[RMDB]
RNA sequence: GGGAACGACUCGAGUAGAGUCGAAAAAGCCCAGCUUGAGAGAUAGGACUCGUAAGACUAUCACUCACUUCUUACGAGUGUCUCUCAAGCCAUACAGAGUGAUAGUGGUAAGAAGUGAGUGAUAGUCUUACCACUCCUCUCACUCUGUAUGUGGGCACGAUCCUACUAUGUUCGCAUAGUAGGAUCGAAAAGAAACAACAACAACAAC
Reactivity to DMS in 0.01 (KOAc 150mM, MgCl2 10mM, bicine 150mM(pH8.5), 24C), signal-to-noise 1, nucleotides 027 to 156: a210g000c000c000c000a040g000c080u010u020g010a030g020a060g000a070u000a070g040g030a030c010u000c110g010u010a020a030g010a070c040u000a070u020c010a030c010u000c000a050c020u000u020c030u000u000a060c010g010a120g010u000g020u000c000u000c000u000c010a030a110g010c120c150a050u000a200c190a220g000a040g030u020g040a090u000a010g010u020g020g020u000a020a010g010a050a030g010u020g010a040g000u000g020a040u000a010g020u010c040u000u000a000c010c010a060c020u000c020c030u000c120u000c000a110c030u000c020u010g040u000a020u000g020u010g000g030g000c000a210